[RMDB]
RNA sequence: GGGAACGACUCGAGUAGAGUCGAAAAAACAGCAGCUGGGCCUGUUGGCGGCUUGUCCGCGUGACCGCCAGGGCCGAGAAAAGCACAGCGGACUGCGCUCGGAGAAGCCCUGAAUUAACUCCACUGGACCCGGGUUCGAUUCCCGCCAUCUCCACCAGUGGACUAUUAUGUUCGCAUAAUAGUCCACAAAAGAAACAACAACAACAAC
Reactivity to 2A3 in 0.01 (KOAc 150mM, MgCl2 10mM, bicine 150mM(pH8.5), 24C), signal-to-noise 2, nucleotides 027 to 156: a000a010c060a030g050c030a000g000c020u100g030g040g000c000c000u050g020u080u030g020g000c020g000g000c020u060u130g050u040c020c020g030c020g010u030g020a120c000c000g000c010c010a070g000g010g000c000c000g030a040g000a030a070a010a020g000c000a010c040a030g050c000g010g010a020c070u070g010c030g000c030u090c060g080g000a110g030a070a020g000c020c020c000u050g070a110a100u060u040a110a020c010u020c040c010a000c010u020g090g070a120c020c020c050g000g070g010u140u110c030g030a130u000u050c010c000c000g000c020c010a110u030c070u030c000c010a100c040c000a020
An RNA of 207 nucleotides, treated with 2A3 and read out base by base. The reactions ran in a buffer of 150 mM KOAc, 10 mM MgCl2 and 150 mM bicine (pH 8.5), at 24 C. Values cover nucleotides 27 to 156. Source: RMDB library ARCHII, as collected in RNAgym.